An RNA of 177 nucleotides, treated with DMS and 2A3 and read out base by base. Source: RMDB library TTRDEL, as collected in RNAgym. For 2A3, 3,756 sequencing reads were counted. The DMS profile rests on 2,055 reads. The RNA was probed in 150 mM KOAc, 10 mM MgCl2 and 150 mM bicine (pH 8.5) at 24 C. 2A3 adducts were read by reverse transcription with SuperScript II with manganese.

RNA sequence: GGGAACGACUCGAGUAGAGUCGAAAAGAUAUGGACUCAAGGGAGUUGCCUCUCGGAAACGAGAGGGCAACGAAGAACUUGCCCGUCCUAAGUCAAAGGUAGUGUCAUCUUCGGAUGACACUACCAAGUCACUAAGAGGGUUCGCCCUCUUAGUGACAAAAGAAACAACAACAACAAC
Reactivity to DMS in 0.01 (KOAc 150mM, MgCl2 10mM, bicine 150mM(pH8.5), 24C), signal-to-noise 2, nucleotides 027 to 126: g000a040u000a000u000g000g010a010c010u000c020a000a000g000g000g020a010g010u000u000g000c020c000u000c000u000c010g030g000a000a000a000c000g000a000g000a010g010g000g010c000a000a000c020g000a060a100g000a040a180c000u000u000g000c300c160c250g000u010c010c010u000a010a090g000u000c000a090a160a130g000g000u000a000g000u010g010u000c000a000u000c010u000u020c170g010g000a030u000g000a010c000a010c010u000a000c010c010a000a020
Reactivity to 2A3 in 0.01 (KOAc 150mM, MgCl2 10mM, bicine 150mM(pH8.5), 24C), signal-to-noise 1, nucleotides 027 to 126: g000a010u000a000u030g000g000a000c000u010c020a010a000g020g000g010a020g020u000u010g010c000c000u010c010u000c010g020g000a000a010a010c000g010a000g000a000g020g000g020c010a000a000c000g060a080a040g000a000a000c000u000u010g050c160c300c060g000u000c000c010u010a000a000g000u010c080a150a060a110g000g000u010a010g000u020g020u010c010a000u000c020u120u140c300g020g000a010u010g000a000c000a010c000u000a010c000c000a010a010